[RMDB]
RNA sequence: GGGAACGACUCGAGUAGAGUCGAAAAGAACUCACCAGCAAAUGUUUACGACAAGAUUCGACAUUUGCAAAUAACGUAGCGAUCUUCCAGAAUCUUGUCGAAACGUUCCCAAUCGCUACGCCCUAAAUGGCUCUAUAUCAUUCGUGAUAUAGAGCCAAAAAGAAACAACAACAACAAC
Reactivity to DMS in 0.01 (KOAc 150mM, MgCl2 10mM, bicine 150mM(pH8.5), 24C), signal-to-noise 1, nucleotides 027 to 126: g010a180a150c090u000c070a090c050c040a100g030c100a080a020a090u000g020u000u000u000a190c050g000a020c010a030a000g000a070u070u000c030g050a080c120a110u010u020u000g000c140a010a090a100u000a060a020c030g000u000a000g000c020g000a040u000c040u000u050c190c160a130g010a000a000u000c000u000u000g000u000c010g000a000a010a100c070g000u010u020c000c000c020a150a060u000c000g000c030u000a020c010g000c000c090c000u010a020a150a050
An RNA of 177 nucleotides, treated with DMS and read out base by base. The reactions ran in a buffer of 150 mM KOAc, 10 mM MgCl2 and 150 mM bicine (pH 8.5), at 24 C. For DMS, 646 sequencing reads were counted. For DMS the reverse transcriptase was MarathonRT.